[RMDB]
RNA sequence: GGGAACGACUCGAGUAGAGUCGAAAAAUUGGAAAUGGAUCCUUCCUCUCAAUGAAUUUGCAGUCUACUAGGGGAAAACAGCCAUACUUAUACAUAACUAGAUUGCAAAGUAGACAGCAGUAGGUAAUAAGUGAAAGACAGAAGUAAACUGCCAUCACGCCAUCAUUAUAUUCGUAUAAUGAUGGCGAAAAGAAACAACAACAACAAC
Reactivity to 2A3 in 0.01 (KOAc 150mM, MgCl2 10mM, bicine 150mM(pH8.5), 24C), signal-to-noise 3, nucleotides 027 to 156: a000u100u080g040g020a020a040a090u100g050g010a040u020c020c000u020u000c020c020u060c010u030c040a030a160u100g100a050a100u170u040u080g030c030a020g020u000c010u010a070c050u110a090g010g000g040g020a000a060a030a040c040a020g050c000c000a020u040a050c020u150u090a130u040a170c040a040u110a100a040c030u010a020g020a100u020u020g020c000a020a020a020g000u000a060g020a060c050a030g000c010a010g010u110a010g060g050u060a020a070u090a230a050g030u030g080a060a040a010g040a030c020a020g050a060a020g030u080a050a140a090c040u060g010c030c050a070u130c090a030
Reactivity to DMS in 0.01 (KOAc 150mM, MgCl2 10mM, bicine 150mM(pH8.5), 24C), signal-to-noise 1, nucleotides 027 to 156: a190u020u020g010g000a170a110a070u020g000g000a110u000c020c060u000u010c050c040u000c020u000c140a190a130u000g000a030a080u000u000u010g020c000a060g020u000c020u000a020c020u000a080g020g010g060g020a110a080a060a080c080a210g070c030c030a050u010a180c160u000u000a100u000a120c030a110u020a050a260c120u000a010g010a070u000u000g030c000a050a050a040g040u000a100g000a030c070a060g020c000a030g010u000a040g010g000u000a080a110u010a050a060g020u000g020a030a060a130g010a100c030a020g010a010a070g000u000a020a020a080c070u010g020c020c050a100u000c030a170

Source: RMDB library OK3TST, as collected in RNAgym. An RNA of 207 nucleotides, treated with 2A3 and DMS and read out base by base. For DMS, 1,587 sequencing reads were counted. The RNA was probed in 150 mM KOAc, 10 mM MgCl2 and 150 mM bicine (pH 8.5) at 24 C. For DMS the reverse transcriptase was MarathonRT.